[RMDB]
RNA sequence: GGGAACGACUCGAGUAGAGUCGAAAAGGCGCAGCGCGGCCAGCGCAUCGGUGGCCGCCUGCCGUCGCUGUAACCGCGACGCGCGGGCCUGCGCACGUUCCAGCUCGGACACCCGCGCGCGCAAUCGUGGCAUCAGUCUUUUCGAAGACUGAUGCCAAAAAGAAACAACAACAACAAC
Reactivity to DMS in 0.01 (KOAc 150mM, MgCl2 10mM, bicine 150mM(pH8.5), 24C), signal-to-noise 2, nucleotides 027 to 126: g020g010c020g000c020a020g010c180g030c000g010g010c020c020a030g010c000g000c110a080u000c230g000g070u000g000g010c020c040g010c010c020u000g020c110c040g000u000c010g050c200u000g000u000a120a110c090c110g000c000g000a080c000g010c000g010c000g010g020g030c080c040u000g000c030g030c000a020c150g000u000u050c020c070a260g000c130u020c150g000g010a020c060a300c030c000c010g020c020g050c000g030c040g010c000a060a040u010c260g000